RNA sequence: GGGAACGACUCGAGUAGAGUCGAAAAUAAUGAGCGGCGAGACCAUACGGGCCUUGAGUGCUGGUUCGAGUAUCAUGUUGAUGCCCAUGCAGCCUGGGAACUGCGAAGGUACGAGUGUCACCGAUCGGACCAUAGUCUCUGUACUCUUACACAUGGCUAACUAAUGCACCUUCGGGUGCAUUAGUUAAAAAGAAACAACAACAACAAC
Reactivity to DMS in 0.01 (KOAc 150mM, MgCl2 10mM, bicine 150mM(pH8.5), 24C), signal-to-noise 1, nucleotides 027 to 156: u010a120a100u000g000a000g050c020g000g000c040g010a140g050a080c030c000a190u000a140c070g030g030g010c000c010u020u000g010a080g010u020g040c030u010g020g040u010u000c030g010a180g000u000a050u000c030a130u000g000u000u040g060a100u000g020c000c000c030a160u000g000c000a050g010c000c000u060g000g030g000a080a030c000u040g000c110g020a150a050g020g000u000a030c040g000a180g000u000g030u000c020a080c030c030g000a140u000c060g010g020a060c010c000a060u000a160g020u000c000u010c000u020g060u010a090c030u000c010u010u000a100c070a060c080a080u000g010g050c060
Reactivity to 2A3 in 0.01 (KOAc 150mM, MgCl2 10mM, bicine 150mM(pH8.5), 24C), signal-to-noise 2, nucleotides 027 to 156: u240a000a130u040g060a000g060c090g010g000c020g010a020g010a070c030c000a010u030a170c100g010g000g010c000c000u060u030g070a030g020u080g050c050u060g000g050u030u020c060g010a000g050u110a060u160c020a050u120g070u100u040g070a150u060g070c060c030c010a020u080g010c010a000g050c020c030u120g070g000g030a090a030c000u020g000c040g060a100a020g030g000u040a040c040g010a020g110u030g050u060c060a030c140c030g050a030u020c010g010g000a010c010c000a020u110a040g060u020c030u000c000u060g050u040a070c040u030c000u090u080a030c060a000c010a080u090g030g030c070